[RMDB]
RNA sequence: GGGAACGACUCGAGUAGAGUCGAAAAGCAUAUGCCGAUUAGCGCAUCGGCAUAUUACGAUAUUAUAGCAUCGGCGCAUCGUAUACGAUAUAUUAGCGCCGUACGAUAUGCCGUAGCAUGCAUUACGCCCUAAGCCCUCAUUCGUGAGGGCUUAGGGAAAAGAAACAACAACAACAAC
Reactivity to 2A3 in 0.01 (KOAc 150mM, MgCl2 10mM, bicine 150mM(pH8.5), 24C), signal-to-noise 2, nucleotides 027 to 126: g000c010a010u040a000u030g010c020c000g020a040u040u080a080g030c060g050c060a000u000c010g010g000c020a000u000a000u000u040a020c050g010a030u020a060u170u190a140u040a030g000c040a040u100c030g000g050c000g000c020a020u000c000g010u050a040u000a080c070g010a130u060a020u020a030u260u180a040g020c000g000c090c000g020u000a000c020g010a000u020a010u030g050c000c000g010u020a110g070c050a020u070g000c010a030u180u150a130c120g090
Reactivity to DMS in 0.01 (KOAc 150mM, MgCl2 10mM, bicine 150mM(pH8.5), 24C), signal-to-noise 2, nucleotides 027 to 126: g030c150a050u000a000u000g000c000c020g000a010u000u000a120g070c130g080c160a300u000c000g000g000c000a010u000a010u010u000a070c060g000a170u020a100u020u020a100u020a070g030c040a160u010c000g010g010c040g000c050a050u000c030g000u000a010u030a020c060g010a070u010a060u010a130u000u010a060g070c060g020c010c100g070u000a020c020g010a020u010a030u000g010c030c030g020u000a100g010c110a090u020g020c090a030u010u010a170c200g000
An RNA of 177 nucleotides, treated with 2A3 and DMS and read out base by base. For DMS the reverse transcriptase was MarathonRT. For 2A3, 1,628 sequencing reads were counted. It was measured as part of the RMDB library OK2TRN. The RNA was probed in 150 mM KOAc, 10 mM MgCl2 and 150 mM bicine (pH 8.5) at 24 C. High DMS reactivity at an A or C suggests that its Watson-Crick edge is free.